Notes
An RNA of 207 nucleotides, treated with 2A3 and read out base by base. 2A3 adducts were read by reverse transcription with SuperScript II with manganese. The data come from the RNA Mapping Database (RMDB), library OK3TST. The reactions ran in a buffer of 150 mM KOAc, 10 mM MgCl2 and 150 mM bicine (pH 8.5), at 24 C.
RNA sequence: GGGAACGACUCGAGUAGAGUCGAAAACACUGAUUGAGCGUAUCCAGCCUCAGGCCAUCCACAUGCAAAGGAAAAGAGAAAGAGAAGAGGGCUUUUGUAACCUGAAGAUGGAAAGGAUGUUAGGACAAACAGUAGUAUCAGAUUACACCUUAUUUAACACGAGGAGUGGUUUCGACCACUCCUCGUGAAAAGAAACAACAACAACAAC
Reactivity to 2A3 in 0.01 (KOAc 150mM, MgCl2 10mM, bicine 150mM(pH8.5), 24C), signal-to-noise 1, nucleotides 027 to 156: c070a030c020u040g010a150u100u170g030a120g040c010g020u040a060u100c100c040a010g030c010c040u030c020a030g030g000c000c020a010u030c040c040a020c000a080u090g070c040a020a130a090g010g070a040a020a030a030g090a000g000a060a190a010g020a000g000a050a000g020a050g010g030g030c000u020u030u030u060g030u000a000a050c030c050u010g070a030a010g030a060u090g030g000a000a080a000g040g000a000u020g010u080u070a050g010g000a060c060a020a150a030c030a010g010u050a000g020u000a030u010c030a060g010a060u090u150a040c030a010c050c010u000u200a080u180u280u160a100a050